[RMDB]
The record gives the reactivity of an RNA of 177 nucleotides to 2A3 and DMS. DMS adducts were read by reverse transcription with MarathonRT. The DMS profile rests on 1,894 reads. The 2A3 profile rests on 2,914 reads. The RNA was probed in 150 mM KOAc, 10 mM MgCl2 and 150 mM bicine (pH 8.5) at 24 C. 2A3 adducts were read by reverse transcription with SuperScript II with manganese. Source: RMDB library TTRDEL, as collected in RNAgym. Values are in units of 0.01, from 0 to 300, in steps of 10.
RNA sequence: GGGAACGACUCGAGUAGAGUCGAAAAGAUAUGGAAUGAAGGAGGGAGUCCGUCGGAAACGAUAGGACGUUGAUCUCCCAUUCCUAAGUCAAAGCAUUCGCAAGUCGUUCGCGACUUGCGAAUGCAACAUGAGUUAACCGUUCGCGGUUAACUCAUGAAAAGAAACAACAACAACAAC
Reactivity to 2A3 in 0.01 (KOAc 150mM, MgCl2 10mM, bicine 150mM(pH8.5), 24C), signal-to-noise 2, nucleotides 027 to 126: g020a010u080a000u170g010g050a050a000u060g010a300a220g030g000a000g000g000g010a020g000u030c000c000g000u020c000g080g000a090a050a020c020g010a030u200a300g010g010a000c010g000u030u020g000a000u020c000u000c020c010c000a000u010u000c000c000u000a210a000g050u010c060a150a080a010g040c000a020u000u030c000g010c010a000a000g010u030c000g040u100u160c300g030c030g160a000c000u000u000g000c000g000a000a000u000g000c000a000a000
Reactivity to DMS in 0.01 (KOAc 150mM, MgCl2 10mM, bicine 150mM(pH8.5), 24C), signal-to-noise 2, nucleotides 027 to 126: g010a030u010a300u010g000g000a010a000u000g000a170a170g020g000a040g000g000g000a020g000u000c000c010g010u000c000g000g000a100a120a180c000g010a010u000a090g040g000a010c000g000u000u010g010a010u000c000u000c000c010c000a010u010u000c000c000u000a030a100g010u000c040a070a120a150g010c000a000u000u010c010g000c000a000a000g020u000c000g000u000u010c230g010c000g010a020c000u000u000g010c000g010a000a000u010g020c000a010a090